[RMDB]
RNA sequence: GGGAACGACUCGAGUAGAGUCGAAAAGGAUGAUCUGGUCCCGGCCAGUCAUCCGAAUUAGUACCGGGAUUGCAUCGUCGAGCCGUCAGGGGCGAAGACGAGAACCUGAAAGCACGAAGCACCGGGCGGUGCGUGUGCGAGAUAUAACGCCCAACAAACGGUCCUAAUUAUUCGUAAUUAGGACCGUAAAAGAAACAACAACAACAAC
Reactivity to 2A3 in 0.01 (KOAc 150mM, MgCl2 10mM, bicine 150mM(pH8.5), 24C), signal-to-noise 1, nucleotides 027 to 156: g000g000a010u000g000a040u160c040u140g000g000u020c010c050c040g060g000c000c000a000g000u000c000a000u050c010c000g030a000a150u210u140a030g020u030a050c010c010g010g000g020a070u070u220g010c010a050u070c000g000u020c000g000a080g020c070c010g110u280c200a080g000g110g050g000c010g020a100a000g000a000c040g010a010g000a000a010c000c000u090g020a120a000a000g000c000a000c030g000a100a010g010c000a000c030c060g130g070g000c020g040g000u000g000c120g000u120g000u010g000c000g010a000g040a000u190a010u020a040a050c070g030c010c030c000a090a050c050a040a030
Reactivity to DMS in 0.01 (KOAc 150mM, MgCl2 10mM, bicine 150mM(pH8.5), 24C), signal-to-noise 1, nucleotides 027 to 156: g020g010a000u000g000a060u010c000u010g000g000u000c020c060c170g060g000c000c020a050g040u000c030a010u000c010c000g010a070a010u010u010a100g060u000a090c040c050g040g000g000a060u000u000g010c100a170u010c020g010u010c020g010a300g000c010c000g030u000c170a300g030g020g020g030c000g000a100a160g020a040c040g010a040g000a040a060c040c030u000g000a140a180a230g020c010a100c020g000a080a290g040c060a010c040c070g000g020g010c160g030g000u000g010c000g010u000g000u000g010c000g020a000g000a140u000a060u000a080a080c010g000c000c000c010a070a100c220a140a150
Chemical mapping of a 207-nucleotide RNA with 2A3 and DMS. DMS adducts were read by reverse transcription with MarathonRT. Values cover nucleotides 27 to 156. Values are in units of 0.01, from 0 to 300, in steps of 10. High DMS reactivity at an A or C suggests that its Watson-Crick edge is free. For 2A3 the reverse transcriptase was SuperScript II with manganese.